[RMDB]
Structure probing data (2A3 and DMS) for a 177-nucleotide construct.
Reactivities are rounded to 0.1 and cut off at 0 and 3.
For 2A3 the reverse transcriptase was SuperScript II with manganese.
DMS adducts were read by reverse transcription with MarathonRT.
Conditions: 150 mM KOAc, 10 mM MgCl2 and 150 mM bicine (pH 8.5), 24 C.
RNA sequence: GGGAACGACUCGAGUAGAGUCGAAAACAGUUGGCAGUGCGACACACACGGAGAGCAGUGGCUGGCUCGGCGUCUCGGCACGGGGAAGUGCACCGCUGGCUGCCGAGUUUGACGAGAUCUGCAUCAAACUGAGCUUCAUAUUCGUAUGAAGCUCAGUAAAAGAAACAACAACAACAAC
Reactivity to 2A3 in 0.01 (KOAc 150mM, MgCl2 10mM, bicine 150mM(pH8.5), 24C), signal-to-noise 5, nucleotides 027 to 126: c030a030g030u040u090g100g000c020a020g010u030g110c000g060a010c020a000c000a000c010a020c100g040g020a040g030a010g060c020a030g020u030g070g020c030u020g020g010c000u010c010g000g020c000g030u000c010u000c010g000g020c010a050c040g050g000g030g080a170a110g090u090g090c070a070c030c040g060c090u030g040g000c060u070g000c000c000g000a000g000u030u050u090g020a020c000g010a000g020a160u030c020u040g030c020a050u070c060a040a060
Reactivity to DMS in 0.01 (KOAc 150mM, MgCl2 10mM, bicine 150mM(pH8.5), 24C), signal-to-noise 4, nucleotides 027 to 126: c070a080g040u000u010g010g000c050a050g020u030g000c030g000a070c100a060c100a090c120a100c120g000g000a090g010a050g000c030a040g020u010g000g000c050u000g000g000c000u000c000g010g010c030g020u010c000u010c020g000g030c010a010c020g000g000g010g000a110a070g010u010g000c100a090c110c000g030c120u010g010g000c070u020g020c000c020g000a020g000u000u010u010g020a090c070g000a080g020a060u010c040u000g000c040a070u010c110a040a120